[RMDB]
The record gives the reactivity of an RNA of 177 nucleotides to 2A3 and DMS. Source: RMDB library OK2TRN, as collected in RNAgym. DMS adducts were read by reverse transcription with MarathonRT. Reactivities are given for positions 27 through 126. For 2A3 the reverse transcriptase was SuperScript II with manganese. For DMS, 10,153 sequencing reads were counted.

RNA sequence: GGGAACGACUCGAGUAGAGUCGAAAAGGCAGUUUAUAACCUUAAUAUACUCAGGAGGUAAUAAAUUCACUAGGAUGUUGGGGCGGAGCUAGGAUGUAGACUUAUCAUUAAAAAGGCAGGUACAUAAAAUUAACGUAUCUUUCGAGAUACGUUAAUUAAAAGAAACAACAACAACAAC
Reactivity to 2A3 in 0.01 (KOAc 150mM, MgCl2 10mM, bicine 150mM(pH8.5), 24C), signal-to-noise 2, nucleotides 027 to 126: g030g000c010a010g010u000u090u050a110u020a020a010c000c000u080u020a220a040u130a130u040a120c060u050c070a030g140g000a000g040g090u040a070a030u030a050a090a050u090u010c000a000c090u060a030g000g040a040u080g070u150u100g010g000g010g040c050g000g020a020g040c010u030a010g020g050a020u020g020u040a010g020a020c000u020u080a020u130c030a090u060u200a010a100a050a000a000g020g000c020a000g040g020u050a050c020a070u120a080a200
Reactivity to DMS in 0.01 (KOAc 150mM, MgCl2 10mM, bicine 150mM(pH8.5), 24C), signal-to-noise 7, nucleotides 027 to 126: g010g010c080a070g010u000u000u010a040u000a100a070c020c010u000u000a100a120u010a130u010a100c130u010c120a100g020g000a040g000g020u000a060a040u000a010a040a060u000u000c090a090c090u000a080g010g010a070u000g010u000u000g020g010g010g020c060g010g000a080g010c060u000a050g010g010a060u000g020u000a060g000a060c080u000u000a060u010c060a060u010u010a030a050a070a090a070g000g020c040a010g020g000u000a030c100a070u010a050a040